[RMDB]
RNA sequence: GGGAACGACUCGAGUAGAGUCGAAAAAGUCUGAUGAAGCAAGACUUUGUUGAUACACUCCUCCUAGACAAAAGGGUGGGGAGAGCAGCCCGUACUGGAGAAAGCCACAGGGCUCACUGUGCUACCCGGCAAAGGACUUAUUCGUAAGUCCUUUGCCAAAAGAAACAACAACAACAAC
Reactivity to DMS in 0.01 (KOAc 150mM, MgCl2 10mM, bicine 150mM(pH8.5), 24C), signal-to-noise 3, nucleotides 027 to 126: a000g000u000c000u000g030a190u010g000a130a050g020c120a160a030g000a000c000u000u000u000g000u010u010g010a050u010a140c210a050c040u000c010c010u000c000c040u010a060g000a190c270a090a080a090a180g020g000g010u020g030g000g020g010a000g010a070g020c140a090g020c020c010c010g000u010a040c200u040g010g010a110g000a070a110a100g020c030c010a040c080a050g020g010g040c020u000c060a030c090u000g010u010g010c090u000a040c010c020c020
Reactivity to 2A3 in 0.01 (KOAc 150mM, MgCl2 10mM, bicine 150mM(pH8.5), 24C), signal-to-noise 3, nucleotides 027 to 126: a000g020u000c020u000g040a050u130g130a120a010g100c110a080a010g010a000c010u000u030u040g150u080u130g010a020u040a040c050a020c010u000c000c000u020c000c010u050a060g030a170c160a090a100a090a060g060g020g070u120g010g020g050g000a070g020a000g000c080a000g000c010c000c000g070u120a070c040u060g050g020a080g070a110a090a000g040c020c000a010c060a070g000g070g000c000u020c020a050c030u100g000u020g010c010u080a070c030c000c000
The record gives the reactivity of an RNA of 177 nucleotides to DMS and 2A3. The 2A3 profile rests on 1,287 reads. The reactions ran in a buffer of 150 mM KOAc, 10 mM MgCl2 and 150 mM bicine (pH 8.5), at 24 C. For 2A3 the reverse transcriptase was SuperScript II with manganese. It was measured as part of the RMDB libraries RFM100 and RFMREP. Reactivities are given for positions 27 through 126.